[RMDB]
RNA sequence: GGGAACGACUCGAGUAGAGUCGAAAAUCCUAAUCGUUCGCGAUUAGGAAAAUAAGGAAACCUUCGUGCUGGCGCGACUAAAUGAGUGCUCGCCCACAUAAAAAACUCAGCUCUUCGGAGCUGAGAAUCAUGGCUUUAAGUUCGCUUAAAGCCAUGAAAAAGAAACAACAACAACAAC
Reactivity to 2A3 in 0.01 (KOAc 150mM, MgCl2 10mM, bicine 150mM(pH8.5), 24C), signal-to-noise 2, nucleotides 027 to 126: u000c000c000u000a010a000u000c000g040u060u100c230g000c000g080a000u010u000a000g000g000a000a060a000a070u140a040a010g120g000a040a130a080c000c000u080u130c110g060u040g060c130u040g020g000c060g010c000g070a020c030u150a110a240a260u250g120a160g200u110g080c020u010c000g000c010c020c010a020c020a020u250a010a160a030a030a030a030c000u020c000a010g000c010u000c000u020u110c240g050g000a000g000c020u000g000a000g020a000a020
Reactivity to DMS in 0.01 (KOAc 150mM, MgCl2 10mM, bicine 150mM(pH8.5), 24C), signal-to-noise 2, nucleotides 027 to 126: u010c000c000u010a000a000u000c000g040u000u000c190g010c010g000a020u000u010a010g000g000a010a020a060a050u000a070a080g000g010a070a190a180c000c020u010u010c120g010u000g010c160u010g020g000c110g040c090g000a020c020u000a060a140a110u010g010a070g030u010g000c050u000c060g000c000c010c030a030c070a110u020a000a050a080a100a060a090c000u000c000a020g000c000u000c000u000u000c170g010g010a000g000c000u000g000a000g000a030a040

About this RNA
This 177-nucleotide RNA was probed chemically with 2A3 and DMS. For 2A3 the reverse transcriptase was SuperScript II with manganese. DMS adducts were read by reverse transcription with MarathonRT. The data come from the RNA Mapping Database (RMDB), library M2PK50. The DMS profile rests on 1,371 reads. Conditions: 150 mM KOAc, 10 mM MgCl2 and 150 mM bicine (pH 8.5), 24 C.